Conditions: 150 mM KOAc, 10 mM MgCl2 and 150 mM bicine (pH 8.5), 24 C. Structure probing data (2A3 and DMS) for a 177-nucleotide construct. Reactivities are given for positions 27 through 126. For 2A3 the reverse transcriptase was SuperScript II with manganese. The data come from the RNA Mapping Database (RMDB), library TTRDES.
RNA sequence: GGGAACGACUCGAGUAGAGUCGAAAAGAUAUGGAUCGCGCCACUGGCUGAUGACCUACUUCGGAAACGAAGUAGCAAGGCCGUGGGCGAUCCUAAGUCAAACACAAGUCCGUUCGCGGACUUGUGACAGUAGCUGCAGGUUCGCCUGCAGCUACUGAAAAGAAACAACAACAACAAC
Reactivity to 2A3 in 0.01 (KOAc 150mM, MgCl2 10mM, bicine 150mM(pH8.5), 24C), signal-to-noise 1, nucleotides 027 to 126: g010a000u070a010u140g020g010a000u020c050g000c180g300c110c020a010c150u160g020g000c010u020g060a300u150g010a070c000c000u000a010c010u000u000c000g010g020a040a100a100c010g030a010a010g010u010a000g030c010a070a300g000g000c000c010g020u020g010g000g000c000g020a000u010c000c000u000a010a010g000u010c020a110a070a030c000a000c010a000a000g000u000c010c000g030u070u110c300g010c040g050g000a000c030u020u000g000u000g010a040
Reactivity to DMS in 0.01 (KOAc 150mM, MgCl2 10mM, bicine 150mM(pH8.5), 24C), signal-to-noise 2, nucleotides 027 to 126: g000a050u000a300u010g010g000a000u020c020g000c030g030c000c000a010c000u010g030g000c000u000g000a070u020g000a100c300c000u000a000c000u010u000c000g000g000a090a180a280c020g010a000a010g000u000a000g000c030a040a150g020g010c020c020g050u000g010g010g000c010g000a000u000c000c000u000a000a070g000u010c060a150a130a300c000a020c020a000a000g000u010c000c000g010u000u010c260g020c020g000g000a000c000u000u000g000u000g000a040